This 177-nucleotide RNA was probed chemically with DMS and 2A3. For DMS, 2,110 sequencing reads were counted. The reactions ran in a buffer of 150 mM KOAc, 10 mM MgCl2 and 150 mM bicine (pH 8.5), at 24 C. DMS adducts were read by reverse transcription with MarathonRT.
[RMDB]
RNA sequence: GGGAACGACUCGAGUAGAGUCGAAAAAGCUAUAAGAGAACACAAAUCUGUAGCUGCUGGGAGACCACCAUGUGGAGAGAUUGUUCUAUGCGGGAGACCAACAGAGAGGCAAAAACUAAGAGAAACAAGACUAUUGUCUAUUCGUAGACAAUAGUCUAAAAGAAACAACAACAACAAC
Reactivity to DMS in 0.01 (KOAc 150mM, MgCl2 10mM, bicine 150mM(pH8.5), 24C), signal-to-noise 3, nucleotides 027 to 126: a050g020c010u000a050u000a070a080g010a010g020a150a070c160a100c250a100a100a140u010c020u000g020u000a040g010c000u000g030c110u010g020g000g030a090g000a110c060c060a060c040c070a050u000g000u000g010g000a120g010a050g000a090u010u010g010u000u000c020u000a060u000g000c060g000g010g010a090g020a090c060c010a040a070c140a050g000a040g000a050g000g010c080a040a030a050a070a070c130u000a040a080g010a060g040a100a070a060c180a050
Reactivity to 2A3 in 0.01 (KOAc 150mM, MgCl2 10mM, bicine 150mM(pH8.5), 24C), signal-to-noise 2, nucleotides 027 to 126: a000g000c020u020a000u060a180a080g040a020g100a230a030c090a010c010a120a100a060u000c010u000g040u050a000g020c030u030g000c010u030g020g000g030a090g000a020c010c000a020c030c020a090u060g060u100g040g090a030g000a010g020a190u090u060g020u110u000c020u030a050u090g030c010g000g040g010a030g000a020c010c000a000a030c010a000g060a010g000a000g030g000c000a020a000a030a080a100c060u110a140a030g070a000g100a190a040a010c030a040